An RNA of 177 nucleotides, treated with DMS and 2A3 and read out base by base.
RNA sequence: GGGAACGACUCGAGUAGAGUCGAAAACAAUCCAGCUGUCGUUGAUCGGCACGCGCAGUUUGGCGGCGCGCAGCUUGGACACCAGUAAUGCCCAUGCUUCGGAGACCGCCUCGUCGAUGCCUAGUGGUGCCUUUCUUAUCUUCGGAUAAGAAAGGCAAAAAGAAACAACAACAACAAC
Reactivity to DMS in 0.01 (KOAc 150mM, MgCl2 10mM, bicine 150mM(pH8.5), 24C), signal-to-noise 2, nucleotides 027 to 126: c150a090a130u020c010c000a140g000c040u010g010u000c050g000u000u000g020a060u010c090g000g000c000a020c060g000c090g020c210a100g030u070u050u000g000g050c020g000g030c020g010c020g000c060a000g000c000u010u010g040g000a000c050a040c060c050a130g000u080a150a210u010g000c020c000c000a010u000g000c010u000u010c010g000g000a190g020a190c040c030g020c030c030u000c060g010u000c050g020a130u010g010c020c010u000a130g000u000g020g030
Reactivity to 2A3 in 0.01 (KOAc 150mM, MgCl2 10mM, bicine 150mM(pH8.5), 24C), signal-to-noise 2, nucleotides 027 to 126: c010a000a050u100c020c040a030g020c020u100g010u070c070g020u060u100g060a150u180c020g000g060c050a060c050g020c000g000c000a020g000u120u190u220g010g000c010g000g000c000g000c000g000c020a000g000c000u000u020g040g000a020c000a040c020c000a090g100u300a110a030u130g000c020c010c000a000u040g000c010u000u050c000g050g060a160g090a260c010c000g000c010c010u020c000g030u060c020g070a180u050g000c000c010u030a040g050u010g110g030

Background:
For DMS the reverse transcriptase was MarathonRT. The reactions ran in a buffer of 150 mM KOAc, 10 mM MgCl2 and 150 mM bicine (pH 8.5), at 24 C.